RNA sequence: GGGAACGACUCGAGUAGAGUCGAAAAUUAAUAUGGCCGGUCUUCCUGCAAUGUCUAUUCCUGCUGGUUUCUCUGCUAACAAUGGUAUGCCAGUUGGUCUGCAAAUCAUCGGAAAAGCAUUUGACGAAAGUACAGCGUUAUUCGUAACGCUGUACUUAAAAGAAACAACAACAACAAC
Reactivity to DMS in 0.01 (KOAc 150mM, MgCl2 10mM, bicine 150mM(pH8.5), 24C), signal-to-noise 3, nucleotides 027 to 126: u020u010a100a120u020a120u010g020g040c010c040g000g020u000c050u000u010c010c010u000g010c080a080a050u000g000u000c060u000a100u010u000c020c020u000g030c060u010g000g010u000u000u000c030u000c070u010g010c050u000a040a120c110a060a090u000g000g000u000a090u000g020c000c020a060g010u000u000g020g000u000c060u010g010c160a030a070a060u000c030a040u010c100g010g010a050a070a070a090g020c040a070u010u000u000g020a140c100g010a080
Reactivity to 2A3 in 0.01 (KOAc 150mM, MgCl2 10mM, bicine 150mM(pH8.5), 24C), signal-to-noise 2, nucleotides 027 to 126: u030u040a000a080u160a070u150g040g030c000c010g040g030u020c020u070u020c020c000u020g000c000a020a060u100g020u030c000u020a080u020u080c010c010u060g020c020u000g000g000u030u060u000c070u010c020u080g050c000u010a050a040c060a070a170u050g060g000u150a040u080g070c000c000a000g000u000u030g020g000u070c030u030g010c000a070a000a100u030c040a030u070c030g010g000a000a050a070a020g050c040a010u040u080u150g110a110c080g030a050
This 177-nucleotide RNA was probed chemically with DMS and 2A3. The data come from the RNA Mapping Database (RMDB), library OK2TST. For DMS the reverse transcriptase was MarathonRT. For 2A3 the reverse transcriptase was SuperScript II with manganese. The RNA was probed in 150 mM KOAc, 10 mM MgCl2 and 150 mM bicine (pH 8.5) at 24 C.